[RMDB]
RNA sequence: GGGAACGACUCGAGUAGAGUCGAAAACGAGGAUUUCUUCCCUUCCUCCCCUCCGGCCCUUCCUCGACUCGGGUUGGCUCAUCCUCGGCGAGGGCGACGGUCCUCAGUUCUCUCUAUUCUUUCUUGAAAGGCGUUUUGUUCGCAAAACGCAAAAGAAACAACAACAACAAC
Reactivity to 2A3 in 0.01 (KOAc 150mM, MgCl2 10mM, bicine 150mM(pH8.5), 24C), signal-to-noise 4, nucleotides 027 to 129: c070g000a050g020g050a060u080u050u010c040u040u030c030c000c000u010u010c000c000u000c000c000c000c000u020c010c010g030g010c000c000c010u050u030c020c010u020c000g030a040c020u000c040g020g040g000u010u050g030g000c030u020c020a060u040c030c010u030c010g020g020c030g030a050g000g020g000c030g020a070c060g030g020u050c000c010u040c010a030g020u110u010c020u000c000u000c000u010a040u150u020c000u040u060u000c010u020u040g090a080a050a030g060
Reactivity to DMS in 0.01 (KOAc 150mM, MgCl2 10mM, bicine 150mM(pH8.5), 24C), signal-to-noise 3, nucleotides 027 to 129: c160g030a070g030g000a130u040u030u050c150u010u040c020c000c030u020u010c000c040u020c000c040c030c030u020c040c090g020g050c020c050c050u040u000c090c020u030c040g020a130c050u020c050g080g020g000u020u030g030g050c050u020c090a050u030c070c020u050c070g020g050c030g030a190g000g010g030c080g010a170c010g000g070u030c030c040u060c110a000g000u060u010c000u040c030u000c060u040a050u020u030c040u080u010u020c000u050u040g030a010a010a010g040